[RMDB]
Source: RMDB library OK1LIB, as collected in RNAgym.
Chemical mapping of a 177-nucleotide RNA with 2A3 and DMS.
The 2A3 profile rests on 1,965 reads.
The RNA was probed in 150 mM KOAc, 10 mM MgCl2 and 150 mM bicine (pH 8.5) at 24 C.
RNA sequence: GGGAACGACUCGAGUAGAGUCGAAAAGUAGGCGCGUGGAGUAAGACCGAUAUCACGACGUUCAUGUCACUGGUAAGCGGGUUCUGUGACAUUCAACGCCAGCAACUGCGCGCUCGUCGUGGCAAGCACCUACGCUGGUGUUCGCACCAGCGUAGGUAAAAGAAACAACAACAACAAC
Reactivity to 2A3 in 0.01 (KOAc 150mM, MgCl2 10mM, bicine 150mM(pH8.5), 24C), signal-to-noise 3, nucleotides 027 to 126: g210u190a030g030g000c000g000c010g030u070g010g030a050g010u040a060a020g070a080c030c060g010a020u020a010u080c030a030c050g040a010c010g040u140u140c090a080u140g060u030c020a010c040u030g050g040u170a200a030g150c060g010g100g000u090u030c030u000g040u020g010a040c000a080u110u070c080a140a090c040g010c000c010a010g040c000a050a110c030u010g000c010g000c000g000c000u010c050g070u030c020g010u040g010g000c010a040a040g000c020
Reactivity to DMS in 0.01 (KOAc 150mM, MgCl2 10mM, bicine 150mM(pH8.5), 24C), signal-to-noise 2, nucleotides 027 to 126: g000u040a120g000g000c000g010c000g100u000g000g020a100g010u000a070a070g030a140c020c010g000a130u000a070u000c000a090c000g000a030c000g010u020u050c160a090u000g000u000c000a090c150u010g000g000u010a060a050g010c040g010g000g000u030u020c040u000g010u030g000a060c040a120u050u060c260a110a130c050g040c010c050a090g000c170a150a120c050u030g030c120g020c050g000c040u000c030g000u000c020g000u000g000g070c190a150a030g000c170